RNA sequence: GGGAACGACUCGAGUAGAGUCGAAAAGCUGGCGUGGCUGGCCGUUCCAGGACAGGUCGCGGCGAUCGAGGCGACCGGUCACCCGGGUCCGCCGCAGCGCCUCGGCCAGGCGCUCCGCCUGCCAGGAUGGAGCAGCAGGAUUCGUCCUGCUGCUCCAAAAAGAAACAACAACAACAAC
Reactivity to DMS in 0.01 (KOAc 150mM, MgCl2 10mM, bicine 150mM(pH8.5), 24C), signal-to-noise 1, nucleotides 027 to 126: g030c040u020g010g020c000g060u000g020g050c000u000g010g050c300c000g020u000u010c090c080a210g000g000a200c090a100g000g000u000c040g010c160g020g010c000g000a080u010c170g010a130g000g030c010g020a100c010c000g010g010u010c140a130c300c000c000g000g010g000u010c170c010g030c110c000g000c070a120g010c000g010c050c000u010c030g010g010c020c050a100g000g000c050g000c070u000c060c030g000c060c000u020g000c000c060a030g000g010a220